[RMDB]
RNA sequence: GGGAACGACUCGAGUAGAGUCGAAAAGAUAUGGAAGUGAUGACCAACAGGCACUCUCUGACUACCCACCGUGAUAUCGGAAACGAUAUCACGAGGUCAGAGUUGCUGUUGCAAGCUUCCUAAGUCACAUUUACUAUCUCUUCGGAGAUAGUAAAUGAAAAGAAACAACAACAACAAC
Reactivity to 2A3 in 0.01 (KOAc 150mM, MgCl2 10mM, bicine 150mM(pH8.5), 24C), signal-to-noise 8, nucleotides 027 to 126: g020a030u100a040u210g010g010a010a010g030u030g170a300u150g050a110c070c010a010a010c020a020g300g000c090a070c110u120c010u000c010u030g000a010c010u100a130c070c110c070a040c030c020g000u010g010a000u010a000u000c000g000g020a050a050a030c010g000a000u000a000u010c000a000c000g000a000g010g000u000c000a000g000a010g000u030u230g000c000u000g000u000u010g020c060a300a300g000c010u010u010c000c000u020a160a040g050u040c020a000
Reactivity to DMS in 0.01 (KOAc 150mM, MgCl2 10mM, bicine 150mM(pH8.5), 24C), signal-to-noise 9, nucleotides 027 to 126: g010a030u010a300u010g000g010a020a020g040u010g020a060u010g010a210c300c010a010a010c010a020g010g010c040a060c250u000c000u010c000u010g000a010c000u000a050c050c070c120a300c140c010g000u000g000a010u000a000u000c000g000g000a080a090a180c000g010a010u000a000u000c000a000c000g000a020g010g000u000c000a010g000a020g010u000u000g010c000u000g010u000u000g000c020a050a110g010c000u000u000c000c000u010a040a120g010u000c040a220
Source information
Structure probing data (2A3 and DMS) for a 177-nucleotide construct. Conditions: 150 mM KOAc, 10 mM MgCl2 and 150 mM bicine (pH 8.5), 24 C. Source: RMDB library TTRINS, as collected in RNAgym.